RNA sequence: GGGAACGACUCGAGUAGAGUCGAAAAGGUAGCAGAGAAGAGACUAGACUUCAGACUAGAUAGUAUCACACUACAGGUACAUAGUAGAGACAUACAUAGAUGAGUAUGACACAUCAGAGCUGCCAUGAAUCCCGUAGCAUUUCGAUGCUACGGGAUUAAAAGAAACAACAACAACAAC
Reactivity to 2A3 in 0.01 (KOAc 150mM, MgCl2 10mM, bicine 150mM(pH8.5), 24C), signal-to-noise 2, nucleotides 027 to 126: g060g000u030a000g040c020a020g080a030g010a190a040g070a000g000a080c020u050a050g070a040c000u070u020c120a060g040a060c010u000a000g040a130u100a070g040u020a030u060c020a060c030a020c120u160a040c060a060g070g000u090a020c020a030u050a060g040u010a010g010a000g000a050c010a020u100a000c040a040u080a040g150a100u140g010a000g020u030a030u040g000a020c000a020c000a130u030c020a030g070a010g150c010u020g020c000c000a010u060g040
Reactivity to DMS in 0.01 (KOAc 150mM, MgCl2 10mM, bicine 150mM(pH8.5), 24C), signal-to-noise 3, nucleotides 027 to 126: g040g020u010a010g000c030a100g010a160g000a050a040g010a150g020a110c150u010a120g020a060c040u000u000c050a160g020a160c010u000a020g020a170u020a110g020u010a070u010c100a160c160a090c070u000a040c050a070g010g000u000a050c100a080u000a050g010u000a050g000a050g000a090c130a050u000a000c060a080u010a100g020a110u000g000a070g010u000a010u000g010a110c100a020c040a040u010c030a060g020a190g000c000u010g010c010c020a120u010g000